Source: RMDB library OK3TST, as collected in RNAgym. Chemical mapping of a 207-nucleotide RNA with 2A3 and DMS. DMS adducts were read by reverse transcription with MarathonRT. In probing experiments dimethyl sulfate is read out at A N1 and C N3, which are open when not base-paired. For 2A3, 12,559 sequencing reads were counted. The RNA was probed in 150 mM KOAc, 10 mM MgCl2 and 150 mM bicine (pH 8.5) at 24 C.

[RMDB]
RNA sequence: GGGAACGACUCGAGUAGAGUCGAAAAGCAUUAAGAGAGUACUCUUAUUCCCACAACGUUGGUGACAACGUUGAUUUUCCGGUGGCCACCCGCCCGGGCCACCGUUACUCCACUCCACUCCUUCGGGACUGGUUUGGAGGAACAGCUUAGGGCUAAACAUAAUCACUAUAUUCGUAUAGUGAUUAUGAAAAGAAACAACAACAACAAC
Reactivity to 2A3 in 0.01 (KOAc 150mM, MgCl2 10mM, bicine 150mM(pH8.5), 24C), signal-to-noise 5, nucleotides 027 to 156: g020c020a050u060u070a020a000g010a000g040a060g250u150a170c000u010c000u020u010a020u030u010c000c000c010a010c000a000a000c000g000u000u010g010g060u120g070a050c000a000a000c000g000u000u000g040a060u080u040u110u070c080c010g000g000u000g000g010c000c010a030c050c090c070g000c010c020c000g000g000g000c000c000a000c000c000g000u000u060a010c000u000c000c000a000c000u000c000c000a010c010u000c000c010u020u080c210g050g000g000a000c010u000g000g000u000u010u000g000g000a000g000g010a010a060c060a020g060c030u080u170a040g000g000g000c000u020a030a020a000
Reactivity to DMS in 0.01 (KOAc 150mM, MgCl2 10mM, bicine 150mM(pH8.5), 24C), signal-to-noise 2, nucleotides 027 to 156: g030c060a080u010u000a050a050g010a110g000a300g010u000a090c020u010c030u020u010a160u010u000c020c000c000a300c020a000a010c010g050u000u000g020g020u000g000a300c040a020a030c010g020u000u000g000a100u000u000u000u000c100c000g110g080u000g010g020c010c030a040c030c030c280g000c030c000c020g010g020g020c010c020a010c010c030g020u010u000a140c010u000c000c020a050c010u010c000c000a010c050u010c000c000u000u000c300g070g030g020a050c000u000g020g000u020u000u000g010g010a000g000g010a020a000c040a090g020c080u010u000a070g050g020g010c000u020a060a150a270